[RMDB]
RNA sequence: GGGAACGACUCGAGUAGAGUCGAAAAAGAGAAGAAAGAAGAGCUCCAAGAUUGUAAGAUUGCUCCCUUAAUGGUUGCAUACAUGUUGGAAAGGGAACUAGUCCGCAAAACCAGAUUCCUACCGGUAGCAGGCGGAACAAGCAGUGUGUACAUUGAGUCAUAACAGUACUUUCGAGUACUGUUAUGAAAAAGAAACAACAACAACAAC
Reactivity to DMS in 0.01 (KOAc 150mM, MgCl2 10mM, bicine 150mM(pH8.5), 24C), signal-to-noise 4, nucleotides 027 to 156: a070g010a130g000a100a080g000a090a070a080g000a080a080g010a090g000c030u010c030c020a050a130g010a130u010u000g020u000a070a090g010a170u000u000g020c020u010c030c010c010u000u010a090a120u010g020g050u010u010g030c030a110u010a060c090a060u010g030u010u000g020g010a080a070a080g020g010g000a020a050c010u010a070g010u000c020c050g010c130a050a050a080a060c030c020a030g000a170u000u000c040c010u000a100c060c030g000g020u000a090g020c050a080g010g030c060g040g020a050a050c070a040a060g020c030a080g020u000g010u000g030u000a050c050a080u000u020g000a140g000
Reactivity to 2A3 in 0.01 (KOAc 150mM, MgCl2 10mM, bicine 150mM(pH8.5), 24C), signal-to-noise 4, nucleotides 027 to 156: a000g050a010g020a050a000g020a050a090a000g030a040a020g020a010g020c030u020c020c020a030a030g060a180u070u090g070u110a040a060g050a160u060u130g000c000u060c040c000c000u060u110a100a050u180g050g000u040u060g010c000a010u030a070c040a030u070g050u080u030g060g020a110a080a070g050g000g000a020a010c020u020a010g060u020c010c010g000c030a020a020a020a060c010c000a010g030a100u080u070c010c000u030a090c010c060g010g000u010a020g050c080a030g090g000c010g020g030a030a040c020a050a000g070c020a020g030u010g000u010g010u100a040c010a070u080u140g040a040g110